[RMDB]
RNA sequence: GGGAACGACUCGAGUAGAGUCGAAAAAUAGGCUUAUCAAGAGAGGUGGAGUGACUGGCCCGAUGAAACCCGGCAGCCAGAAAUGGUGCCAAUUGCUGCAGCGGAAACGUUGAAAGAUGAGCCGAUGGGAGCUUCGACUUCGGUCGAAGCAAAAGAAACAACAACAACAAC
Reactivity to DMS in 0.01 (KOAc 150mM, MgCl2 10mM, bicine 150mM(pH8.5), 24C), signal-to-noise 2, nucleotides 027 to 129: a010u030a090g020g010c050u000u000a040u010c080a150a070g000a150g060a100g000g040u060g000g000a090g040u070g000a190c070u070g000g020c000c020c030g000a080u030g020a070a170a060c040c160c020g030g000c070a070g040c040c040a020g030a000a000a000u050g000g000u040g000c040c040a000a160u070u030g040c040u060g000c060a030g030c040g000g000a170a080a130c080g070u000u000g000a140a100a100g050a130u000g010a060g080c000c000g030a040u010g010g030g000a110
Reactivity to 2A3 in 0.01 (KOAc 150mM, MgCl2 10mM, bicine 150mM(pH8.5), 24C), signal-to-noise 2, nucleotides 027 to 129: a000u120a020g000g000c000u000u010a040u060c040a110a000g070a000g000a000g000g030u040g030g080a060g030u000g020a000c010u010g050g000c000c000c000g030a010u090g010a020a030a080c000c040c000g050g000c080a050g130c000c010a020g000a010a060a020u080g010g030u040g000c050c000a050a060u050u070g040c040u080g030c000a030g030c000g020g000a030a080a000c050g020u000u010g070a060a020a000g040a010u020g030a000g050c000c010g000a000u070g030g000g000a110